The record gives the reactivity of an RNA of 207 nucleotides to 2A3.
RNA sequence: GGGAACGACUCGAGUAGAGUCGAAAAUAUUUGCUCCACCACUCAUUAGCUUUGCUAGUGCUGUGACCUGAGGCAGGUCGCUUGGCCUCCUUGGGCCUCCUCAGUUUCUUCCUUUGAAAAAUGAGGAUGAUAAUGUGCACCUUGUAGGACUAUUGCGGCAUCAUAGGGAAUUCGUUCCCUAUGAUGCAAAAGAAACAACAACAACAAC
Reactivity to 2A3 in 0.01 (KOAc 150mM, MgCl2 10mM, bicine 150mM(pH8.5), 24C), signal-to-noise 2, nucleotides 027 to 156: u100a030u020u060u100g040c040u060c070c010a110c020c000a000c010u110c000a010u030u020a000g010c030u140u080u300g020c000u010a020g020u010g000c070u030g070u090g050a120c000c020u030g030a020g010g010c110a010g040g030u020c040g030c300u190u210g010g000c010c010u020c010c000u020u010g000g000g000c000c020u030c010c020u010c000a040g010u070u000u010c030u040u040c040c050u120u060u170g050a050a030a030a030a030u110g000a040g040g000a020u050g030a010u040a170a060u060g050u080g050c040a050c010c100u060u090g040u080a060g010g010a030c020u060a070u150u220g060c100g070
High 2A3 reactivity points to a flexible backbone, as in loops and unpaired stretches. Source: RMDB library OK3TST, as collected in RNAgym.